[RMDB]
RNA sequence: GGGAACGACUCGAGUAGAGUCGAAAAGAAGGCACUUUCGAGUGCCUUCAUGGGGAGCUCAGGUCUCCCUCCCUUCCAAACUCCCUAAGGGAGGAGACCUAAUUAGGUGCACUUUCGAGUGCACCAAGACGAUAGCGAAAUUCGUUUCGCUAUCGUCAAAAGAAACAACAACAACAAC
Reactivity to 2A3 in 0.01 (KOAc 150mM, MgCl2 10mM, bicine 150mM(pH8.5), 24C), signal-to-noise 2, nucleotides 027 to 126: g010a010a000g010g000c030a000c030u040u080u200c290g100a020g010u000g000c000c010u010u000c000a000u000g010g000g010g000a040g030c050u060c210a020g010g000u010c000u010c030c020c020u020c010c000c010u030u020c070c030a150a130a110c060u070c000c020c010u110a040a080g000g010g000a010g010g000a000g000a000c000c000u010a030a100u110u130a040g000g000u000g000c000a000c000u050u040u050c210g090a020g000u000g010c000a000c000c000a000a010
Reactivity to DMS in 0.01 (KOAc 150mM, MgCl2 10mM, bicine 150mM(pH8.5), 24C), signal-to-noise 2, nucleotides 027 to 126: g000a020a010g000g010c000a000c000u000u010u020c140g010a010g020u000g000c000c000u010u010c000a020u010g000g000g000g010a040g010c110u000c150a000g020g010u000c000u000c050c050c000u010c010c000c000u000u000c100c130a090a120a190c140u000c040c000c020u040a070a070g000g000g010a070g000g010a020g020a000c010c000u000a090a120u010u000a100g010g010u000g000c000a010c000u000u000u000c120g010a010g020u000g000c000a000c010c020a040a040